The data come from the RNA Mapping Database (RMDB), library RNAMAK. Chemical mapping of a 207-nucleotide RNA with 2A3 and DMS. Reactivities are given for positions 27 through 156. The 2A3 profile rests on 10,161 reads. The DMS profile rests on 4,799 reads. The RNA was probed in 150 mM KOAc, 10 mM MgCl2 and 150 mM bicine (pH 8.5) at 24 C. For DMS the reverse transcriptase was MarathonRT.

RNA sequence: GGGAACGACUCGAGUAGAGUCGAAAAAUCGACGACGCUGGGAAGCCUCGUCCCUGUACGUACGCGAAACAUCCUGAAGCGCGCACGGGAUGGAGUACUGGGACGAGGGCUUCCUGUGCUGAAGCGCGCACGGCAACCGAAAGGUGCGACUCACACACCUAUUAAUAUAGUUCGCUAUAUUAAUAGGAAAAGAAACAACAACAACAAC
Reactivity to 2A3 in 0.01 (KOAc 150mM, MgCl2 10mM, bicine 150mM(pH8.5), 24C), signal-to-noise 5, nucleotides 027 to 156: a000u090c040g030a040c050g020a010c030g000c040u030g010g010g000a010a000g000c000c000u000c000g000u000c000c000c000u020g000u010a010c040g050u050a070c110g060c090g180a230a180a040c000a000u010c010c000u040g050a210a060g020c000g000c000g000c000a010c010g010g000g000a010u010g010g050a080g010u010a000c020u050g000g000g000a000c000g000a000g000g030g000c020u010u010c000c000u000g010u010g000c000u020g010a130a030g010c000g000c000g020c010a030c020g020g000c010a010a020c010c010g050a090a050a030g020g000u000g020c000g070a080c010u080c020a050c000a010c000a010
Reactivity to DMS in 0.01 (KOAc 150mM, MgCl2 10mM, bicine 150mM(pH8.5), 24C), signal-to-noise 2, nucleotides 027 to 156: a070u000c040g010a140c040g020a140c030g020c010u020g010g010g010a080a030g050c030c020u030c000g020u010c000c000c000u010g030u000a030c020g000u020a110c210g020c130g010a190a120a140c010a010u000c010c000u000g020a080a100g000c010g000c000g020c030a300c020g020g030g000a030u000g010g000a140g040u000a020c010u010g000g020g000a030c010g010a040g000g000g020c000u000u000c000c000u000g000u010g000c010u010g000a090a050g000c010g000c020g000c000a300c010g040g000c010a060a090c000c010g020a100a120a190g020g050u000g020c020g010a170c030u000c000a110c040a100c090a130